[RMDB]
RNA sequence: GGGAACGACUCGAGUAGAGUCGAAAACGGGGUUUGAUAUCGCCUUAGCCGACUCGGCGUCUCGGCUGGGGCGGCCCGAUGGUCUACGGCCGUUCGGCGAACACCCAGGCGAAGUCGGCAAAUCAGAGGACCUACCUGGAUUCGUCCAGGUAGGUCCAAAAGAAACAACAACAACAAC
Reactivity to 2A3 in 0.01 (KOAc 150mM, MgCl2 10mM, bicine 150mM(pH8.5), 24C), signal-to-noise 1, nucleotides 027 to 126: c070g010g000g000g010u040u090u110g170a200u050a060u300c000g080c000c000u020u050a010g000c000c000g020a020c000u050c100g010g110c040g170u040c010u000c010g080g000c020u020g000g000g010g010c050g020g060c000c000c000g000a050u070g010g010u010c070u050a090c000g000g000c000c020g010u000u050c030g000g000c010g000a020a050c140a250c090c000c000a000g050g000c020g070a060a070g090u090c000g000g030c070a000a000a200u130c030a000g060a040
Source: RMDB library OK1LIB, as collected in RNAgym. An RNA of 177 nucleotides, treated with 2A3 and read out base by base. For 2A3, 582 sequencing reads were counted. The reactions ran in a buffer of 150 mM KOAc, 10 mM MgCl2 and 150 mM bicine (pH 8.5), at 24 C.